Structure probing data (2A3) for a 207-nucleotide construct. Source: RMDB library RSTRND, as collected in RNAgym. Conditions: 150 mM KOAc, 10 mM MgCl2 and 150 mM bicine (pH 8.5), 24 C. For 2A3 the reverse transcriptase was SuperScript II with manganese. Reactivities are rounded to 0.1 and cut off at 0 and 3.
[RMDB]
RNA sequence: GGGAACGACUCGAGUAGAGUCGAAAAGGUUUCGACAGCGGCUGUUGAAGCAGGGGAAGCGUGUCGAGGAAGCGGCAAUGAUCUCGUAAACCAUAUGUCGCAAAAAAUAAUCGCCAAUACCAAGAGCGAUUCCCAGUCCUUCGCCCUCGCUGCCUAAGCUAACACAAGUCUUCGGACUUGUGUUAGCAAAAGAAACAACAACAACAAC
Reactivity to 2A3 in 0.01 (KOAc 150mM, MgCl2 10mM, bicine 150mM(pH8.5), 24C), signal-to-noise 2, nucleotides 027 to 156: g070g000u000u010u050c050g030a060c050a060g040c030g060g000c050u080g060u300u240g060a070a000g010c070a060g000g010g000g010a000a010g020c070g030u040g070u080c060g010a060g030g000a090a000g010c010g010g000c000a000a000u040g020a080u040c110u100c180g180u300a120a040a070c040c020a010u160a130u060g000u000c000g000c000a040a040a040a040a040a040u190a020a020u110c060g040c070c030a060a050u110a210c020c010a010a080g030a010g010c000g000a000u000u040c000c020c010a000g110u090c020c000u030u040c010g160c020c010c000u000c040g000c010u020g020c000c000u070a090a000